The record gives the reactivity of an RNA of 177 nucleotides to DMS and 2A3. For DMS, 3,147 sequencing reads were counted. The RNA was probed in 150 mM KOAc, 10 mM MgCl2 and 150 mM bicine (pH 8.5) at 24 C. In probing experiments dimethyl sulfate is read out at A N1 and C N3, which are open when not base-paired. Source: RMDB library OK2TST, as collected in RNAgym. For 2A3 the reverse transcriptase was SuperScript II with manganese.
RNA sequence: GGGAACGACUCGAGUAGAGUCGAAAAUGUUAGGCUGCUGGUCAGCUAAUCUGCUGUGGGUUGGGCUCACAUCUGGUCACAGAUGUUCCUUCUGGGAACCAGGCUGAAGGGGCAGCAGCUAGUAGGGCGCUUCCACAUAAUUCGUUAUGUGGAAGCGAAAAGAAACAACAACAACAAC
Reactivity to DMS in 0.01 (KOAc 150mM, MgCl2 10mM, bicine 150mM(pH8.5), 24C), signal-to-noise 3, nucleotides 027 to 126: u010g010u010u000a150g030g010c000u000g000c010u010g010g020u010c030a060g000c060u010a100a100u000c080u000g010c090u000g020u010g010g000g030u020u010g000g020g000c060u010c150a060c070a060u000c030u000g000g000u000c210a140c010a030g000a050u000g010u000u000c020c050u000u020c110u000g010g010g000a060a090c040c080a070g000g020c080u000g000a070a090g010g000g010g010c020a010g000c010a010g010c030u000a080g030u000a060g010g000g000
Reactivity to 2A3 in 0.01 (KOAc 150mM, MgCl2 10mM, bicine 150mM(pH8.5), 24C), signal-to-noise 2, nucleotides 027 to 126: u060g040u010u030a060g080g010c010u020g020c040u040g040g210u040c000a020g010c000u000a000a080u080c080u100g040c020u020g030u070g100g040g090u190u080g090g080g010c020u040c030a060c010a020u020c020u040g030g040u150c100a090c020a080g030a060u080g050u030u080c010c030u060u130c070u090g040g000g000a060a050c030c000a050g000g020c050u040g040a030a060g040g000g040g050c000a020g000c020a010g000c000u050a060g030u040a010g020g040g060